Conditions: 150 mM KOAc, 10 mM MgCl2 and 150 mM bicine (pH 8.5), 24 C. This 177-nucleotide RNA was probed chemically with 2A3 and DMS. The 2A3 profile rests on 26,310 reads.
[RMDB]
RNA sequence: GGGAACGACUCGAGUAGAGUCGAAAAGAUAUGGACAGGAGCAACAGCUAUGAGGUCGGAAACGACCUAUAGACAUGCUCCGUCCUAAGUCAAAACGAGCUUCUAUUGUUCGCAAUAGAAGCUCGAACAACAGAGUAAUGUUCGCAUUACUCUGUUGAAAAGAAACAACAACAACAAC
Reactivity to 2A3 in 0.01 (KOAc 150mM, MgCl2 10mM, bicine 150mM(pH8.5), 24C), signal-to-noise 7, nucleotides 027 to 126: g010a010u050a010u090g030g010a030c220a290g080g000a010g020c010a030a180c060a180g090c030u020a010u200g300a040g030g000u010c010g010g000a030a030a020c000g000a000c000c010u000a000u000a000g020a040c030a030u040g000c000u000c000c010g000u010c000c000u000a040a010g020u000c030a010a020a090a170c010g000a000g000c000u000u000c010u000a010u000u010g040u080u110c300g000c140a000a000u000a000g000a000a000g000c000u000c000g000a000a000
Reactivity to DMS in 0.01 (KOAc 150mM, MgCl2 10mM, bicine 150mM(pH8.5), 24C), signal-to-noise 9, nucleotides 027 to 126: g000a030u000a260u010g000g000a010c010a120g040g010a010g010c000a030a080c300a170g000c000u000a000u000g010a020g010g010u000c000g020g000a070a050a140c010g010a010c000c000u000a010u000a010g000a110c090a200u000g010c000u000c000c000g000u000c000c000u010a010a070g000u000c030a080a060a110a210c020g000a010g000c000u000u000c000u000a000u000u000g010u000u010c210g010c010a010a010u000a000g000a010a000g010c000u000c000g000a020a090